[RMDB]
Structure probing data (DMS and 2A3) for a 177-nucleotide construct. Values cover nucleotides 27 to 126. High DMS reactivity at an A or C suggests that its Watson-Crick edge is free. Source: RMDB library RFMREP, as collected in RNAgym. The RNA was probed in 150 mM KOAc, 10 mM MgCl2 and 150 mM bicine (pH 8.5) at 24 C. DMS adducts were read by reverse transcription with MarathonRT.
RNA sequence: GGGAACGACUCGAGUAGAGUCGAAAAAUAUGUCAUAUACCUUGCUGUAUAUGACACAGCACUCCGCGACAGGACCAGGCUCGUCCUGUCUCAUCGUCGCACUAUGGUGCGACGACGCGAUUCCGUGGAUCAAAUAUAACUUCGGUUAUAUUUGAUCAAAAGAAACAACAACAACAAC
Reactivity to DMS in 0.01 (KOAc 150mM, MgCl2 10mM, bicine 150mM(pH8.5), 24C), signal-to-noise 5, nucleotides 027 to 126: a090u010a050u000g010u000c000a010u000a000u000a000c000c060u000u000g020c250u010g010u000a000u000a000u000g000a010c010a000c100a050g010c140a130c130u000c050c040g010c130g010a040c020a020g000g010a020c020c130a150g010g000c160u010c160g000u000c000c000u000g010u000c020u010c140a090u000c000g010u010c000g000c000a020c000u000a090u020g030g030u000g000c000g000a000c000g000a010c070g010c080g000a150u000u000c030c020g010u010g020
Reactivity to 2A3 in 0.01 (KOAc 150mM, MgCl2 10mM, bicine 150mM(pH8.5), 24C), signal-to-noise 8, nucleotides 027 to 126: a000u190a070u070g000u000c010a000u010a000u010a010c010c040u170u270g070c230u090g070u010a010u000a000u010g000a000c000a000c000a010g060c020a020c040u080c060c050g040c040g010a000c000a010g000g010a010c030c030a100g160g080c100u080c110g010u000c000c000u000g010u000c000u030c010a020u020c010g000u000c000g090c010a000c010u100a140u300g220g000u010g000c010g000a000c000g000a010c020g030c010g050a090u100u000c040c030g040u100g120
The 2A3 profile rests on 13,955 reads.